[RMDB]
RNA sequence: GGGAACGACUCGAGUAGAGUCGAAAAACACAAAGGCUUCUUCUGUCUGUCAAUCAAAUCUUCUUAGGGGAAUAUAGAGGGACGGACUUUCGUUUACCCGAGAUCUUACCCUCCGCCGUAAAUGUGCUUUCUGUAAGAUAAGGAAAUAACCCAACCCGAAUGGAAAGCAGUUCGCUGCUUUCCAUUCAAAAGAAACAACAACAACAAC
Reactivity to DMS in 0.01 (KOAc 150mM, MgCl2 10mM, bicine 150mM(pH8.5), 24C), signal-to-noise 1, nucleotides 027 to 156: a050c040a100c060a120a110a140g000g040c030u000u000c030u000u020c020u010g020u000c050u010g050u000c080a100a080u000c090a070a150a080u000c030u000u000c030u010u000a100g030g010g000g020a020a130u000a020u000a130g000a060g020g000g010a070c050g010g000a070c040u000u000u000c020g000u000u000u000a130c170c130c060g040a070g000a090u000c020u000u010a240c050c010c000u010c020c000g050c010c030g000u000a020a060a080u000g020u000g000c020u000u000u000c100u050g020u000a090a110g010a070u010a080a160g020g000a080a040a130u000a120a120c010c000c010a070a200c050c000c040
Reactivity to 2A3 in 0.01 (KOAc 150mM, MgCl2 10mM, bicine 150mM(pH8.5), 24C), signal-to-noise 2, nucleotides 027 to 156: a000c080a000c010a060a130a030g070g000c050u040u010c010u060u000c060u070g090u020c010u050g080u060c050a020a040u050c050a100a110a070u060c080u160u030c030u180u250a080g000g000g020g040a010a030u190a060u080a130g030a060g040g010g050a010c030g010g000a010c030u030u080u060c110g040u080u160u070a050c050c000c000g010a010g000a060u010c000u010u070a060c010c000c000u020c020c010g010c020c000g080u100a020a070a150u160g030u050g030c010u000u040u070c000u080g100u090a010a030g030a120u070a100a010g030g010a000a100a100u120a040a080c060c000c010a040a080c040c070c030